[RMDB]
Record summary: Chemical mapping of a 177-nucleotide RNA with DMS and 2A3. For DMS the reverse transcriptase was MarathonRT. Conditions: 150 mM KOAc, 10 mM MgCl2 and 150 mM bicine (pH 8.5), 24 C. For DMS, 7,050 sequencing reads were counted.
RNA sequence: GGGAACGACUCGAGUAGAGUCGAAAAGAUAUGGAUUCGUCUGAGGGAGCUACAGGUUCGGAAACGAACCUUUAGCUUUGAUCUCAGGACGAAUCCUAAGUCAAAGAAUUCCGUUCGCGGAAUUCAACGAUACAGAGUAGUUCGCUACUCUGUAUCGAAAAGAAACAACAACAACAAC
Reactivity to DMS in 0.01 (KOAc 150mM, MgCl2 10mM, bicine 150mM(pH8.5), 24C), signal-to-noise 5, nucleotides 027 to 126: g010a050u000a300u010g000g000a010u000u000c000g020u000c000u010g000a010g010g000g000a000g020c000u000a000c070a000g010g020u010u000c000g010g000a150a100a300c010g010a000a010c000c010u000u000u000a000g000c010u000u000u010g000a050u010c000u000c000a030g020g010a020c000g000a010a000u000c000c000u000a010a080g000u000c050a140a160a180g000a020a020u000u000c010c000g020u010u010c240g000c010g020g000a020a000u000u000c010a040a170
Reactivity to 2A3 in 0.01 (KOAc 150mM, MgCl2 10mM, bicine 150mM(pH8.5), 24C), signal-to-noise 2, nucleotides 027 to 126: g030a020u070a050u180g000g000a000u000u000c000g010u010c000u000g000a020g020g080g010a010g000c010u010a010c030a040g000g020u010u010c020g020g040a100a090a070c000g000a000a030c000c000u000u010u000a000g000c020u030u060u030g010a010u000c010u000c020a020g180g090a020c000g000a010a000u000c000c000u000a030a000g000u000c050a050a110a250g010a010a020u010u000c040c000g010u020u090c300g010c010g060g010a000a010u000u020c000a010a030